Annotation: Structure probing data (DMS and 2A3) for a 177-nucleotide construct.
[RMDB]
RNA sequence: GGGAACGACUCGAGUAGAGUCGAAAAUUGUGGGCGAAAGUUUGGUCAUUAGGUCGAUACGAAAAAUAUAUUUUGAUAUCGUCCGCGAACAUUUGAACUUUCAUGUCAGGAUGGGUUUUCAAAUAGCCGUAAAUUUAGUGUUCGCACUAAAUUUACGAAAAGAAACAACAACAACAAC
Reactivity to DMS in 0.01 (KOAc 150mM, MgCl2 10mM, bicine 150mM(pH8.5), 24C), signal-to-noise 6, nucleotides 027 to 126: u030u020g020u010g000g010g020c090g010a010a010a030g000u000u000u000g000g010u000c050a140u030u030a100g000g020u000c010g000a010u000a010c040g000a000a010a030a140a140u040a180u060a080u010u000u000u010g000a130u000a000u000c000g000u010c000c000g010c190g010a040a040c090a100u010u020u050g020a010a020c010u000u000u000c000a070u020g000u010c100a080g020g000a090u010g000g010g000u010u010u000u010c070a040a070a090u040a120g020c210
Reactivity to 2A3 in 0.01 (KOAc 150mM, MgCl2 10mM, bicine 150mM(pH8.5), 24C), signal-to-noise 9, nucleotides 027 to 126: u130u090g040u110g060g020g000c050g010a040a010a010g020u020u030u070g050g020u070c070a090u090u210a070g010g000u010c010g010a010u010a020c020g050a030a010a000a080a000u300a040u080a170u120u020u010u010g140a150u010a000u010c000g000u000c010c010g000c040g020a090a030c040a070u110u100u190g020a010a010c000u020u040u040c040a070u130g070u060c030a010g050g050a060u080g020g010g050u050u040u020u050c060a100a100a040u100a080g110c050